[RMDB]
RNA sequence: GGGAACGACUCGAGUAGAGUCGAAAAUAUGUCCAGGGCUACACACAUACAACAAUGGCCAGUACAGAGGGCCGCGAGACCGUGAGGUGGAGCAGAUGCCUUGAAGCUGGUCUCAGUUCGGAACGGGAGAAAUUUUGUAUUUCGAUACAAAAUUUCUAAAAGAAACAACAACAACAAC
Reactivity to 2A3 in 0.01 (KOAc 150mM, MgCl2 10mM, bicine 150mM(pH8.5), 24C), signal-to-noise 5, nucleotides 027 to 126: u200a080u090g100u020c010c030a030g010g020g000c010u070a020c020a000c000a000c010a060u130a160c070a120a010c020a050a190u160g010g000c000c000a000g030u100a020c080a080g100a050g040g030g000c010c010g000c000g000a010g010a000c000c010g020u070g050a050g000g000u020g000g010a010g000c000a010g020a050u120g120c000c000u000u010g020a040a010g010c010u020g000g000u000c000u010c010a000g010u010u050c030g020g030a060a030c020g030g050g020
Reactivity to DMS in 0.01 (KOAc 150mM, MgCl2 10mM, bicine 150mM(pH8.5), 24C), signal-to-noise 7, nucleotides 027 to 126: u030a050u020g000u000c020c020a050g010g000g020c050u000a030c100a070c120a080c100a100u020a100c190a040a060c090a110a110u030g000g000c000c000a010g020u010a070c100a300g000a030g010g000g010c010c070g010c010g010a300g000a010c000c020g010u060g000a130g000g010u000g000g000a300g000c010a040g010a040u010g010c010c000u000u010g000a100a150g000c010u000g000g000u000c000u010c120a120g000u020u000c060g000g010a080a040c070g000g000g010